Description:
Chemical mapping of a 177-nucleotide RNA with 2A3 and DMS. For DMS the reverse transcriptase was MarathonRT. It was measured as part of the RMDB library M2PK50. For 2A3 the reverse transcriptase was SuperScript II with manganese. The reactions ran in a buffer of 150 mM KOAc, 10 mM MgCl2 and 150 mM bicine (pH 8.5), at 24 C.

RNA sequence: GGGAACGACUCGAGUAGAGUCGAAAACGACCGCAGUUCGCUGCGGUCGAAAACAACUGACUACCGUUCGCCUAGCCGGUGUCAGUUUAAGGGCGGAGAUUAAAACCCUGACGUUCGCGUCAGGGAACAAGACCAGUAUGUUCGCAUACUGGUCUUGAAAAGAAACAACAACAACAAC
Reactivity to 2A3 in 0.01 (KOAc 150mM, MgCl2 10mM, bicine 150mM(pH8.5), 24C), signal-to-noise 3, nucleotides 027 to 126: c010g000a000c000c000g010c000a020g010u040u120c180g040c110u000g010c030g020g000u000c010g000a000a000a000a010c040a000a010c000u010g010a010c010u130a050c090c000g050u090u150c060g080c060c080u120a090g050c010c010g010g000u000g010u000c010a000g000u040u060u060a080a040g020g020g030c070g060g040a100g010a080u090u220a040a060a100a120c000c000c000u010g000a010c000g040u040u060c290g010c000g100u010c000a000g000g020g000a000a010
Reactivity to DMS in 0.01 (KOAc 150mM, MgCl2 10mM, bicine 150mM(pH8.5), 24C), signal-to-noise 4, nucleotides 027 to 126: c030g010a030c000c010g020c000a010g020u000u010c210g030c010u000g020c010g000g000u000c000g000a020a020a100a090c170a040a020c000u000g000a010c000u010a030c010c000g000u010u010c110g000c100c030u000a120g010c290c010g010g020u000g010u000c000a000g000u000u000u010a040a120g010g000g010c040g000g000a120g010a090u000u010a050a080a130a140c000c000c000u000g010a000c000g020u000u000c180g010c000g000u000c000a000g000g000g020a020a030